[RMDB]
RNA sequence: GGGAACGACUCGAGUAGAGUCGAAAAUGGAGGUUAGGGCUUCAACAUAGGAGUUUUGAGAGGACACAAUUCAACCGAUCCAUAAUAGUGCCCAACACUUUACAUAUGCCUUCUAAGUCCUCACAACAUUUCGAUAGCUAUUCGUAGCUAUCGAAAUAAAAGAAACAACAACAACAAC
Reactivity to 2A3 in 0.01 (KOAc 150mM, MgCl2 10mM, bicine 150mM(pH8.5), 24C), signal-to-noise 5, nucleotides 027 to 126: u050g010g000a010g040g030u080u110a090g040g020g010c020u120u110c080a050a060c020a080u140a040g040g040a040g040u020u040u060u060g230a250g000a010g000g040a010c020a010c010a130a070u070u050c020a090a110c040c000g050a040u000c020c030a020u080a140a080u080a160g110u040g020c020c010c000a020a010c090a040c020u110u120u140a040c030a050u120a070u140g010c010c010u060u000c030u070a100a030g000u000c010c000u050c020a010c030a030a020c010
Reactivity to DMS in 0.01 (KOAc 150mM, MgCl2 10mM, bicine 150mM(pH8.5), 24C), signal-to-noise 5, nucleotides 027 to 126: u000g010g010a060g010g020u000u000a170g030g010g000c010u000u000c110a080a110c180a100u000a110g000g010a140g000u000u010u000u000g000a120g010a050g000g000a040c030a170c110a040a090u000u010c080a080a080c030c020g000a120u000c050c050a040u000a090a090u010a090g010u000g010c010c030c030a040a120c180a050c100u000u000u000a120c140a070u000a090u010g020c020c010u000u010c150u020a060a120g000u000c010c010u000c010a110c120a030a060c090